[RMDB]
RNA sequence: GGGAACGACUCGAGUAGAGUCGAAAAUAAAUAUAGAAAGCGAUUGUAAAGUUUCGCCUGCGGUUUCGUAAUGCCGACGCAAUAAAAGGACGGGGAUUGUAUAUGUGUUCCUAUUCAAACAAUGCAAAUUUUUCUAAGGAUUCGUCCUUAGAAAAAUAAAAGAAACAACAACAACAAC
Reactivity to DMS in 0.01 (KOAc 150mM, MgCl2 10mM, bicine 150mM(pH8.5), 24C), signal-to-noise 2, nucleotides 027 to 126: u060a070a110a090u040a140u050a150g010a150a080a150g010c060g020a050u000u010g000u000a120a100a260g000u000u010u000c020g000c030c020u010g000c070g000g000u000u010u010c050g000u010a090a090u010g010c040c010g010a110c110g010c050a070a070u010a060a070a110a060g000g000a010c030g010g000g010g010a050u010u020g000u010a100u020a050u010g020u010g000u000u000c010c010u000a090u020u010c140a040a060a060c120a060a070u010g000c090a030a090
Reactivity to 2A3 in 0.01 (KOAc 150mM, MgCl2 10mM, bicine 150mM(pH8.5), 24C), signal-to-noise 1, nucleotides 027 to 126: u070a000a000a000u110a000u050a010g110a000a130a000g070c010g110a120u000u190g060u170a040a070a070g000u030u000u050c030g000c000c020u140g100c040g060g040u030u090u080c060g060u120a070a060u040g010c000c040g000a030c010g000c040a030a000u100a190a080a030a030g030g000a030c010g010g020g010g010a020u080u110g030u090a060u040a040u100g000u010g030u070u000c000c000u020a050u030u090c030a000a020a160c050a060a040u120g070c000a080a080